[RMDB]
RNA sequence: GGGAACGACUCGAGUAGAGUCGAAAAUCAGAGCCACACAAGCCUCAGUCGCCAGAUUCAUCUCAAACCUCCCGUUAAUGAUUUAUGGGAGGCUUUCAUCUCCACAUGGACUGCGGAGACCUACUGUCCCUGUUUCUUGAGUGGAAAUAGAAGGUCAUAUUAUGAUGGCAUUCGUGCCAUCAUAAUAAAAAGAAACAACAACAACAAC
Reactivity to 2A3 in 0.01 (KOAc 150mM, MgCl2 10mM, bicine 150mM(pH8.5), 24C), signal-to-noise 4, nucleotides 027 to 156: u110c030a020g010a030g060c000c030a010c010a010c010a080a010g020c010c020u040c020a020g010u030c020g090c030c010a010g010a080u090u090c020a080u030c070u040c100a090a100a090c000c000u020c010c000c000g020u010u060a160a100u260g250a120u120u190u180a010u030g000g000g000a000g000g000c000u020u020u030c000a080u010c020u040c050c010a060c000a070u090g060g010a030c030u020g020c030g020g010a050g010a050c000c020u130a120c040u060g030u080c020c020c000u000g020u000u060u000c030u070u100g040a070g010u090g100g040a030a030a040u090a040g060a080a020g030g000u020c020a020
Reactivity to DMS in 0.01 (KOAc 150mM, MgCl2 10mM, bicine 150mM(pH8.5), 24C), signal-to-noise 3, nucleotides 027 to 156: u010c020a100g010a180g040c010c030a150c060a080c060a070a060g020c000c020u000c030a080g020u000c070g040c030c000a130g000a150u000u000c050a100u000c010u000c030a070a090a090c020c000u000c020c000c010g040u000u000a120a120u010g010a260u010u000u000a050u010g010g000g000a160g040g000c000u000u010u020c040a080u000c020u000c010c000a060c020a120u000g020g010a110c080u000g020c060g020g010a080g010a040c010c040u010a090c050u000g000u000c000c020c010u000g030u000u000u000c040u000u000g040a100g030u010g000g000a000a070a100u000a100g020a070a070g000g000u000c050a200